[RMDB]
RNA sequence: GGGAACGACUCGAGUAGAGUCGAAAAUGCUUUCAUUGAAUUUUGAGGCCCCUCGGGGGAUUGCUGACGCGAGAGUGAUUGGUGAGAAAAAGGCAGUCGUCCUGCAACACGGUCAGUUGGUGGUCACUUGAUGCUGACUGGGCGCAAAUACCAUGAGAGUAAGAACUGAUUUCGAUCAGUUCUUACUAAAAGAAACAACAACAACAAC
Reactivity to DMS in 0.01 (KOAc 150mM, MgCl2 10mM, bicine 150mM(pH8.5), 24C), signal-to-noise 1, nucleotides 027 to 156: u000g020c030u020u000u010c050a090u010u000g000a080a110u020u000u000u000g010a070g040g040c000c030c020c050u010c050g030g030g040g050g020a060u000u010g030c020u000g030a190c050g020c070g000a120g010a090g040u000g020a120u000u020g000g010u010g000a120g000a060a080a080a090a110g010g050c000a040g000u000c070g030u020c030c000u000g000c000a030a090c050a060c000g010g000u000c000a090g030u000u010g020g020u010g040g030u000c050a170c090u000u000g040a110u000g000c020u010g010a050c000u000g020g000g000c000g000c040a020a040a140u010a070c010c000a120u000g000a240g000
Reactivity to 2A3 in 0.01 (KOAc 150mM, MgCl2 10mM, bicine 150mM(pH8.5), 24C), signal-to-noise 3, nucleotides 027 to 156: u080g000c020u100u170u060c090a120u080u130g270a270a190u120u120u110u080g040a060g020g000c040c070c010c010u020c070g010g000g000g000g030a010u040u160g020c030u030g030a050c030g030c040g070a030g010a030g080u060g050a110u080u060g030g040u080g030a070g050a020a120a060a040a020g050g000c010a010g030u070c040g060u050c010c000u070g070c020a030a030c010a010c050g050g150u070c050a030g000u000u000g040g020u050g030g020u030c020a010c100u010u180g030a040u100g000c010u000g010a030c010u010g000g040g000c010g020c020a050a030a000u120a050c030c000a060u140g060a050g010